[RMDB]
RNA sequence: GGGAACGACUCGAGUAGAGUCGAAAAGAUAUGGAUAUUCCGGAAAAGGAUGAAGAGGUGAUGACCAUGUUGGAUCGGAAACGAUCCAUCAUGCAAGCCUCCAUCCUUUUCCGGAAUAUCCUAAGUCCGAUAGGUAGCUCUUCGGAGCUACCUAUCGAAAAGAAACAACAACAACAAC
Reactivity to DMS in 0.01 (KOAc 150mM, MgCl2 10mM, bicine 150mM(pH8.5), 24C), signal-to-noise 1, nucleotides 027 to 126: g040a050u000a300u030g010g000a000u000a000u000u000c010c030g000g010a000a020a000a010g020g010a040u000g030a200a160g020a040g010g000u000g020a070u000g000a150c300c020a000u000g000u000u000g000g010a050u000c000g010g000a150a070a050c010g000a000u000c000c000a000u000c010a000u000g000c030a050a240g000c010c000u000c010c000a010u000c000c000u000u000u000u010c000c040g000g020a010a000u000a000u000c000c000u000a010a120g000u010c110

This 177-nucleotide RNA was probed chemically with DMS.
DMS adducts were read by reverse transcription with MarathonRT.